RNA sequence: GGGAACGACUCGAGUAGAGUCGAAAAGUACCAUUUUACAACCGAAGUAAUGCAUCCUGUGGGUCCAUUUGCAAAGAUAUGCCAACAGAAAUGCAUGCAGAGCUCUGGAAGUGAUAAUGCAAAUAAAACAUUUCACAUUAUAACUUAAAAUAACAAGCGAUAGUGGGAAGUUCGCUUCCCACUAUCGAAAAGAAACAACAACAACAAC
Reactivity to 2A3 in 0.01 (KOAc 150mM, MgCl2 10mM, bicine 150mM(pH8.5), 24C), signal-to-noise 2, nucleotides 027 to 156: g050u000a010c010c010a060u030u060u040u080a110c070a090a050c050c020g000a100a000g040u040a080a030u050g010c000a020u040c010c000u000g000u050g020g000g000u000c040c010a040u000u030u100g050c060a050a140a000g080a050u070a020u110g050c000c020a010a010c000a020g020a050a120a000u050g000c020a000u020g010c000a010g030a000g040c010u060c050u080g010g030a080a040g000u000g030a010u000a140a020u000g000c050a080a040a150u100a040a140a060a010c010a010u060u060u030c030a020c000a050u090u190a050u220a120a020c040u140u200a060a290a030a040u300a060a030c030a060a030g300
Source: RMDB library OK3TST, as collected in RNAgym. The record gives the reactivity of an RNA of 207 nucleotides to 2A3. Values are in units of 0.01, from 0 to 300, in steps of 10. Conditions: 150 mM KOAc, 10 mM MgCl2 and 150 mM bicine (pH 8.5), 24 C.